[RMDB]
Chemical mapping of a 177-nucleotide RNA with 2A3 and DMS. For DMS the reverse transcriptase was MarathonRT. For DMS, 3,771 sequencing reads were counted.
RNA sequence: GGGAACGACUCGAGUAGAGUCGAAAAGCAGCAAGAGCAUGCCCUACUGAAAUUCAGAAGAGGAGGAGAGGACUCUAUGAAAGCUUGCUGUCCGACGGCUUAUCACCUGAGACGUCGUACAGCGAAGACCACUCUACUCUUUCGAGAGUAGAGUGGUAAAAGAAACAACAACAACAAC
Reactivity to 2A3 in 0.01 (KOAc 150mM, MgCl2 10mM, bicine 150mM(pH8.5), 24C), signal-to-noise 6, nucleotides 027 to 126: g010c020a000g030c030a070a090g040a010g120c020a030u080g030c020c010c000u090a120c040u060g160a070a230a250u130u070c030a060g030a150a010g020a170g050g020a010g020g030a040g010a020g040g060a040c010u020c010u040a090u150g080a060a050a020g070c050u070u070g000c000u010g000u000c000c010g000a010c000g000g020c000u040u030a110u250c080a070c120c060u040g010a000g000a010c010g000u000c000g000u010a000c010a000g000c010g020a040a010g040
Reactivity to DMS in 0.01 (KOAc 150mM, MgCl2 10mM, bicine 150mM(pH8.5), 24C), signal-to-noise 4, nucleotides 027 to 126: g010c040a060g000c050a070a070g000a040g000c050a070u010g010c030c010c010u010a100c080u010g010a070a110a120u000u010c070a050g010a110a070g000a070g010g010a060g010g010a090g020a110g010g000a080c040u000c040u000a090u000g000a040a070a060g000c080u010u000g010c000u000g000u000c030c000g010a030c010g010g000c000u010u000a040u010c250a060c230c300u000g010a010g010a020c010g010u000c000g000u000a000c010a010g010c000g010a040a080g000